[RMDB]
RNA sequence: GGGAACGACUCGAGUAGAGUCGAAAACUCUUGUUAGGUGAAAGUUGAUGGUCGCCGUGUCAGUCCAUGCCUUCGAAAACAGUUCUAUGUAGUAGGGAGUCGAGAACCUAUGAGAGUUAGAACUUGCUAUGCCUUGGACUCUUCGGAGUCCAAGGAACACCGGGAUGUACUUCGGUACAUCCCGGUGAAAAGAAACAACAACAACAAC
Reactivity to 2A3 in 0.01 (KOAc 150mM, MgCl2 10mM, bicine 150mM(pH8.5), 24C), signal-to-noise 1, nucleotides 027 to 156: c030u050c070u120u090g030u070u090a090g040g030u040g020a110a120a070g000u040u060g100a080u070g040g030u020c010g000c010c020g000u030g040u080c040a020g010u030c010c000a030u050g060c010c000u050u080c050g080a030a000a040a070c090a020g010u000u040c000u030a080u120g000u020a040g010u000a000g000g040g020a030g020u080c060g060a010g000a100a090c000c000u000a020u010g060a100g000a020g090u030u030a010g000a000a030c020u020u060g020c050u110a050u170g010c000c000u000u000g030g000a020c010u000c000u020u030c120g110g000a010g000u010c000c000a000a000g000g000a000a000
Reactivity to DMS in 0.01 (KOAc 150mM, MgCl2 10mM, bicine 150mM(pH8.5), 24C), signal-to-noise 1, nucleotides 027 to 156: c020u000c080u000u020g000u010u000a000g010g030u010g000a110a110a160g010u010u000g010a120u000g010g020u010c020g020c040c060g000u010g000u000c050a110g040u000c020c070a130u000g000c010c060u000u000c010g010a070a070a090a080c070a050g030u000u000c020u000a090u000g000u000a300g000u000a010g060g000g000a110g040u000c120g000a180g020a100a160c030c010u000a010u000g000a240g020a180g020u000u000a040g000a030a080c010u000u030g050c000u010a070u010g000c000c010u000u000g110g000a040c000u010c020u000u000c300g040g000a030g040u000c000c000a010a000g040g000a040a060

The data come from the RNA Mapping Database (RMDB), library M2RFPK.
The record gives the reactivity of an RNA of 207 nucleotides to 2A3 and DMS.
The 2A3 profile rests on 676 reads.
Reactivities are given for positions 27 through 156.
High DMS reactivity at an A or C suggests that its Watson-Crick edge is free.
The RNA was probed in 150 mM KOAc, 10 mM MgCl2 and 150 mM bicine (pH 8.5) at 24 C.